[RMDB]
RNA sequence: GGGAACGACUCGAGUAGAGUCGAAAAGGCACUCAUGGACACCCAUAGAACUCCACGAGUUCACGGAAGGUCUGAUUCACAGAUGUGAACUGAAUUCCGUGGAGAAGUGUCCUUCUAUGGGAGUGCAGCACUGCGGUACAUUCGUGUACUGCAGUGCAAAAGAAACAACAACAACAAC
Reactivity to DMS in 0.01 (KOAc 150mM, MgCl2 10mM, bicine 150mM(pH8.5), 24C), signal-to-noise 6, nucleotides 027 to 126: g000g000c010a010c010u000c040a130u000g000g000a100c190a140c080c010c010a020u000a010g010a020a080c070u000c100c000a010c010g010a130g000u000u000c000a000c010g000g000a170a030g000g000u000c000u000g000a170u000u010c120a070c000a120g000a060u010g010u000g000a150a100c150u000g000a040a060u000u000c070c040g010u000g010g010a010g000a060a160g010u000g000u000c070c130u000u000c010u000a010u000g000g000g000a030g010u000g010c010a120
Reactivity to 2A3 in 0.01 (KOAc 150mM, MgCl2 10mM, bicine 150mM(pH8.5), 24C), signal-to-noise 3, nucleotides 027 to 126: g060g000c010a010c010u020c020a070u110g020g030a010c010a010c020c000c000a000u010a010g020a030a020c010u000c020c000a000c010g010a010g060u010u000c000a000c000g000g010a020a000g010g010u000c010u010g080a240u060u040c040a010c040a060g260a160u280g130u000g300a010a010c000u010g000a010a010u030u000c060c040g000u010g020g000a010g010a020a020g020u030g040u060c000c000u040u020c000u010a020u000g000g000g000a000g000u000g000c000a000
This 177-nucleotide RNA was probed chemically with DMS and 2A3. It was measured as part of the RMDB library OK2TRN. The reactions ran in a buffer of 150 mM KOAc, 10 mM MgCl2 and 150 mM bicine (pH 8.5), at 24 C. For DMS the reverse transcriptase was MarathonRT.